[RMDB]
RNA sequence: GGGAACGACUCGAGUAGAGUCGAAAAGAAAGUGUGCACCGUCUCAGCUUUUGUAUACGCAGGACUUUUUGCUGAGACUUUAGUCCUGCAUGACUUCGGUCAUGCGCGUAUACUGGUGCUCACGAAAGGGUACGGGGACCUUCGGGUUUCCGUACCCAAAAGAAACAACAACAACAAC
Reactivity to 2A3 in 0.01 (KOAc 150mM, MgCl2 10mM, bicine 150mM(pH8.5), 24C), signal-to-noise 6, nucleotides 027 to 126: g150a030a070a010g010u000g000u010g000c000a000c010c020g070u020c020u010c040a050g000c020u110u170u150u120g010u010a010u000a010c020g010c030a030g000g010a000c010u090u100u020u100u090g020c040u080g040a020g010a080c000u010u000u030a000g000u000c000c020u020g010c000a000u000g000a000c010u030u040c160g040g000u010c010a000u000g010c020g000c000g000u000a000u010a010c030u030g000g000u000g000c010u010c000a000c010g040a050a020a010
Reactivity to DMS in 0.01 (KOAc 150mM, MgCl2 10mM, bicine 150mM(pH8.5), 24C), signal-to-noise 4, nucleotides 027 to 126: g000a070a090a130g010u000g000u000g000c010a010c000c000g000u010c010u010c010a030g000c020u020u030u040u030g010u000a010u010a010c020g000c140a040g000g010a010c000u010u030u030u010u010g000c000u010g000a030g000a040c030u000u020u020a040g010u000c000c010u020g010c010a000u000g000a010c000u000u040c160g020g010u000c000a000u000g000c030g010c040g000u000a010u000a000c010u030g000g000u000g010c000u000c000a000c000g020a070a100a120